[RMDB]
Source: RMDB library OK2TRN, as collected in RNAgym. This 177-nucleotide RNA was probed chemically with 2A3 and DMS.
RNA sequence: GGGAACGACUCGAGUAGAGUCGAAAACUAAACCGACUCAGGUGGUCAGGUAGAGAAUACCGAGGCGUUCGGGUGAACUAUGGUUAAGGAACUCGGCAAAAUGCCCCCGUAACUUCGGGAGAAGGGGUCAAGGUAGUGUAUUCGUACACUACCUUGAAAAAGAAACAACAACAACAAC
Reactivity to 2A3 in 0.01 (KOAc 150mM, MgCl2 10mM, bicine 150mM(pH8.5), 24C), signal-to-noise 1, nucleotides 027 to 126: c000u040a000a080a080c020c020g070a060c060u060c100a100g030g160u100g060g030u070c040a070g000g040u050a040g020a000g040a210a050u060a110c030c010g000a060g060g000c070g030u040u040c020g040g020g010u090g050a030a040c030u050a120u230g120g060u110u120a070a030g030g010a020a010c000u000c020g020g000c000a020a090a060a160u200g030c000c010c000c010c000g020u010a040a070c050u030u030c050g020g020g030a040g020a050a000g010g000g010g000
Reactivity to DMS in 0.01 (KOAc 150mM, MgCl2 10mM, bicine 150mM(pH8.5), 24C), signal-to-noise 5, nucleotides 027 to 126: c060u000a040a100a140c040c010g000a060c070u010c050a120g020g030u000g000g010u010c080a050g000g020u000a050g000a130g010a100a100u000a070c030c020g000a050g010g000c040g010u010u000c020g010g010g020u010g010a110a100c070u010a070u010g010g010u000u010a100a100g000g010a120a060c050u000c070g020g010c070a060a040a090a080u010g000c040c010c010c010c060g010u010a080a120c070u000u000c060g010g010g000a110g010a080a070g000g000g000g010
The reactions ran in a buffer of 150 mM KOAc, 10 mM MgCl2 and 150 mM bicine (pH 8.5), at 24 C.